[RMDB]
The record gives the reactivity of an RNA of 177 nucleotides to DMS and 2A3. The RNA was probed in 150 mM KOAc, 10 mM MgCl2 and 150 mM bicine (pH 8.5) at 24 C.

RNA sequence: GGGAACGACUCGAGUAGAGUCGAAAAGGCAUCCUCCUAGUCAUACCCUGAAUGUGAAGGAUCAACAAGGGAGGCUAAGGAAGAAGGAGCCUCCUUACUUAGUUUGUGGAGAGUGGCCCUUAUUCCAGCUCACUCGAGUGUUCGCACUCGAGUGAGCAAAAGAAACAACAACAACAAC
Reactivity to DMS in 0.01 (KOAc 150mM, MgCl2 10mM, bicine 150mM(pH8.5), 24C), signal-to-noise 1, nucleotides 027 to 126: g010g020c000a030u000c020c010u010c000c000u000a070g000u000c120a060u010a090c070c030c000u050g000a190a110u010g030u010g020a090a090g000g010a090u010c060a090a090c170a100a120g010g030g010a070g000g010c070u000a030a120g010g050a110a000g040a150a170g000g000a260g010c000c010u010c000c010u000u000a070c110u010u020a130g050u000u000u000g020u000g000g000a040g020a170g010u000g010g000c000c000c060u010u000a130u000u000c020c020a130
Reactivity to 2A3 in 0.01 (KOAc 150mM, MgCl2 10mM, bicine 150mM(pH8.5), 24C), signal-to-noise 2, nucleotides 027 to 126: g040g000c040a090u060c000c020u000c000c010u030a030g040u040c060a060u160a300c020c010c060u090g130a200a070u110g080u090g090a170a100g090g050a100u080c040a010a050c010a030a040g030g000g010a000g000g010c010u050a080a080g050g060a070a040g030a040a060g070g060a010g010c000c000u000c000c000u050u040a090c010u020u150a070g170u090u090u140g110u080g040g000a030g030a080g050u070g030g090c020c050c030u030u090a120u050u000c000c030a040